The record gives the reactivity of an RNA of 170 nucleotides to 2A3 and DMS. The DMS profile rests on 44,774 reads. 2A3 adducts were read by reverse transcription with SuperScript II with manganese.
RNA sequence: GGGAACGACUCGAGUAGAGUCGAAAACGCUUAAAGAGUUAUAUGGCCCCGUUGAUCCUACUUUCUUACACAGAUUCUAUUCACUUAAGGCUGCAGUCCAUGGGUGGAAGAUGGUUGUGUGUGAUAAAACCCCUAGUGUUCGCACUAGGGAAAAGAAACAACAACAACAAC
Reactivity to 2A3 in 0.01 (KOAc 150mM, MgCl2 10mM, bicine 150mM(pH8.5), 24C), signal-to-noise 8, nucleotides 027 to 129: c060g030c030u090u080a110a180a030g240a050g060u300u110a190u050a090u300g080g000c020c000c000c000g020u010u050g030a090u030c000c010u030a140c050u070u090u040c020u070u100a030c040a000c010a050g050a060u050u000c010u030a300u050u030c010a020c000u050u050a070a040g020g000c030u200g160c300a050g050u050c010c020a110u160g030g000g020u000g010g010a000a000g030a020u100g160g020u140u000g020u000g010u000g000u000g030a020u050a070a050a030a090c000
Reactivity to DMS in 0.01 (KOAc 150mM, MgCl2 10mM, bicine 150mM(pH8.5), 24C), signal-to-noise 8, nucleotides 027 to 129: c110g030c080u010u020a080a080a080g060a040g010u040u040a020u020a020u020g000g020c000c000c010c040g020u000u000g010a090u020c040c020u030a090c070u000u000u000c040u020u030a060c030a060c050a010g020a090u000u000c000u030a070u030u010c020a030c030u010u030a050a090g000g040c020u040g030c160a110g040u050c010c000a050u050g000g010g020u030g030g020a000a000g000a000u000g030g040u050u000g000u030g000u000g010u030g000a040u000a040a060a150a140c180